RNA sequence: GGGAACGACUCGAGUAGAGUCGAAAAGUAGCUUAACAGGAUAGAGCACCGUGCUACGGACGCGGAGGUUGUGGGUUCAAGUCCUACCUGGCAUAAAAACUCAAAUUUAGAUUCAAUUUACAAUCGACGCACUUCAUUUAUUCGUAAAUGAAGUGCGAAAAGAAACAACAACAACAAC
Reactivity to DMS in 0.01 (KOAc 150mM, MgCl2 10mM, bicine 150mM(pH8.5), 24C), signal-to-noise 1, nucleotides 027 to 126: g000u000a050g050c000u000u010a100a140c060a110g010g000a080u010a130g000a090g030c050a100c010c080g050u000g000c010u000a100c010g020g020a020c100g030c100g010g000a070g010g000u010u010g000u000g000g020g000u000u020c120a110a220g010u000c030c030u000a100c060c050u000g010g030c070a080u010a030a020a040a050a060c010u000c040a030a110a150u000u000u000a110g020a140u000u000c110a010a070u000u000u020a090c180a020a050u000c040g050a140
Reactivity to 2A3 in 0.01 (KOAc 150mM, MgCl2 10mM, bicine 150mM(pH8.5), 24C), signal-to-noise 2, nucleotides 027 to 126: g030u040a020g020c010u070u090a090a060c050a090g100g050a090u080a080g080a010g050c040a030c010c040g050u060g070c020u060a000c050g030g010a040c050g040c020g010g050a060g030g000u080u040g060u120g030g010g010u050u050c020a080a020g030u000c000c000u010a020c000c000u020g000g000c030a010u150a030a130a040a060a000c050u130c090a090a040a080u210u160u030a060g000a090u050u080c070a070a190u050u120u090a110c100a030a050u040c020g040a030
An RNA of 177 nucleotides, treated with DMS and 2A3 and read out base by base. For DMS, 804 sequencing reads were counted. For DMS the reverse transcriptase was MarathonRT. 2A3 adducts were read by reverse transcription with SuperScript II with manganese.